[RMDB]
RNA sequence: GGGAACGACUCGAGUAGAGUCGAAAAACUGUUCACAGUUAUGCUACUGUAACUGACUCGCGUACACAAAUGUCAUCUAGUUAUGACAUGCGAGUCUCAUUACUAGAUGAGACUGUUGUGAAGUAGUACAGUAGCGUACUACAGCGAGAUGAACAGACGUAGGAAGCAUGUUCGCAUGCUUCCUACGAAAAGAAACAACAACAACAAC
Reactivity to DMS in 0.01 (KOAc 150mM, MgCl2 10mM, bicine 150mM(pH8.5), 24C), signal-to-noise 2, nucleotides 027 to 156: a070c000u000g030u000u000c020a300c000a090g000u010u000a030u010g020c040u000a040c060u000g010u000a050a090c020u000g020a250c040u010c020g000c010g070u000a060c060a120c100a100a080a090u010g060u000c010a000u000c010u000a110g080u010u000a010u000g030a010c010a020u000g020c090g000a060g010u000c030u000c010a000u000u000a160c140u000a120g010a080u000g010a090g000a050c100u030g050u010u010g000u000g010a080a100g010u000a020g040u010a010c000a110g020u010a100g000c090g100u000a000c000u000a040c060a150g000c060g020a070g020a130u010g010a040a060c040a090g000a300
Reactivity to 2A3 in 0.01 (KOAc 150mM, MgCl2 10mM, bicine 150mM(pH8.5), 24C), signal-to-noise 3, nucleotides 027 to 156: a010c030u000g010u000u020c040a020c020a030g050u110u040a010u040g030c040u010a010c020u040g010u070a230a170c000u000g250a070c000u010c010g020c020g060u090a020c000a010c020a030a160a170u030g020u020c000a000u000c030u100a120g130u300u080a060u000g010a010c000a010u040g000c090g050a030g010u000c000u000c000a000u000u040a110c140u090a060g070a100u000g000a000g000a000c020u010g050u130u040g010u050g060a040a000g000u020a000g000u010a000c000a010g050u060a000g010c010g000u000a000c020u100a050c050a060g090c020g050a070g060a150u050g000a010a000c000a000g020a000
This 207-nucleotide RNA was probed chemically with DMS and 2A3. Reactivities are given for positions 27 through 156. It was measured as part of the RMDB library OK3TST. High DMS reactivity at an A or C suggests that its Watson-Crick edge is free. DMS adducts were read by reverse transcription with MarathonRT.